This 207-nucleotide RNA was probed chemically with 2A3. 2A3 is a SHAPE reagent: it acylates the 2'-hydroxyl of flexible nucleotides of all four kinds. Values cover nucleotides 27 to 156. The 2A3 profile rests on 921 reads. The RNA was probed in 150 mM KOAc, 10 mM MgCl2 and 150 mM bicine (pH 8.5) at 24 C. For 2A3 the reverse transcriptase was SuperScript II with manganese.
RNA sequence: GGGAACGACUCGAGUAGAGUCGAAAAGGUAAUGGACGACGCCGGCGUGUGGCGAACAGGGAUACCGGUAGUCAGUGUCUGGAACAUCCCAAGGGGCGGCGGAGCUAGCACCCCGACACGUUAAGGCAAAACUUCGCACGGUUCGCCGUGCGAAGAACCAUGUGCAAUUCUUCGGAAUUGCACAUGGAAAAGAAACAACAACAACAAC
Reactivity to 2A3 in 0.01 (KOAc 150mM, MgCl2 10mM, bicine 150mM(pH8.5), 24C), signal-to-noise 1, nucleotides 027 to 156: g120g000u030a050a010u120g060g020a040c050g010a000c030g030c010c030g030g040c030g000u180g010u020g010g070c030g030a020a030c030a020g080g000g050a050u040a100c010c050g030g010u080a050g060u070c110a030g060u030g030u110c020u010g000g020a050a050c010a030u010c040c000c010a060a090g050g000g000g000c120g000g020c070g060g050a090g050c030u050a010g000c040a080c000c010c000c010g000a000c000a000c020g000u020u120a130a030g040g000c070a010a040a070a020c010u000u000c000g000c000a010c000g050g000u030u000c090g010c040c000g000u040g010c000g000a000a000g000a000a000